[RMDB]
RNA sequence: GGGAACGACUCGAGUAGAGUCGAAAAUAGAUACAUGCGAUCCCAUGCAUGCGCUAGAUCAUAGUCGUACGCUAGUGAGCAGCUAGGUGAGAGGAUCUCGUACAGAGAGCGAUCUGUCUCUCAUGUAUCUUAGGUCAUUUUUCGAAAUGACCUAAGAAAAAGAAACAACAACAACAAC
Reactivity to DMS in 0.01 (KOAc 150mM, MgCl2 10mM, bicine 150mM(pH8.5), 24C), signal-to-noise 9, nucleotides 027 to 126: u010a070g010a130u000a090c030a020u000g000c040g010a090u000c020c010c020a120u010g010c020a050u000g010c090g020c080u000a030g010a070u000c090a120u010a090g000u000c090g020u000a100c170g010c020u000a030g010u000g010a160g010c120a110g010c030u000a040g010g010u000g000a080g010a160g010g000a050u000c030u000c080g020u000a080c110a080g010a030g000a030g010c080g000a110u010c140u010g000u000c010u000c000u000c010a060u000g010u000a050
Reactivity to 2A3 in 0.01 (KOAc 150mM, MgCl2 10mM, bicine 150mM(pH8.5), 24C), signal-to-noise 7, nucleotides 027 to 126: u150a020g110a030u080a070c020a010u040g030c030g030a100u030c020c000c010a000u020g000c000a010u030g030c010g020c040u040a020g020a100u070c030a120u110a120g170u090c050g070u050a030c100g020c080u010a010g030u030g110a060g090c080a010g000c020u050a040g000g120u040g050a070g000a010g040g000a030u010c030u020c040g020u060a080c070a050g060a000g000a010g050c040g060a110u080c060u110g100u040c000u000c000u010c010a020u070g030u020a080